[RMDB]
RNA sequence: GGGAACGACUCGAGUAGAGUCGAAAAAGCGCAGCGCCUCCUCGAUCUCCGACUUAAGCGAACCCGAGCCGCCGUGGAACACGAAGUCGAACGGCUUGGCGUCGGCCGGCAGUCCGAGCUUGGCCGCGGAGAACCUUCCUUUCGAGGAAGGUUCUCCAAAAGAAACAACAACAACAAC
Reactivity to 2A3 in 0.01 (KOAc 150mM, MgCl2 10mM, bicine 150mM(pH8.5), 24C), signal-to-noise 2, nucleotides 027 to 126: a000g050c100g000c000a020g030c040g000c000c000u020c020c000u000c020g100a120u030c020u060c060c000g080a120c000u080u080a030a000g040c020g030a040a010c020c000c000g000a000g020c010c000g000c000c010g030u020g000g100a040a040c110a020c170g150a200a000g080u050c010g050a060a000c010g010g000c050u040u090g010g070c050g100u060c000g010g000c000c000g040g000c030a010g040u020c000c000g000a000g030c000u120u110g040g000c040c000g050c030
Reactivity to DMS in 0.01 (KOAc 150mM, MgCl2 10mM, bicine 150mM(pH8.5), 24C), signal-to-noise 1, nucleotides 027 to 126: a050g000c050g010c000a030g010c040g000c020c020u000c010c040u000c040g030a120u000c000u090c000c040g000a070c020u040u000a220a220g000c020g000a020a160c140c030c000g030a010g010c110c040g050c010c000g100u000g050g000a190a000c040a110c140g050a120a040g030u000c020g020a300a100c090g070g020c000u010u010g000g100c020g000u040c010g000g000c000c040g000g000c000a120g080u030c100c080g000a080g000c060u000u000g000g000c020c000g020c090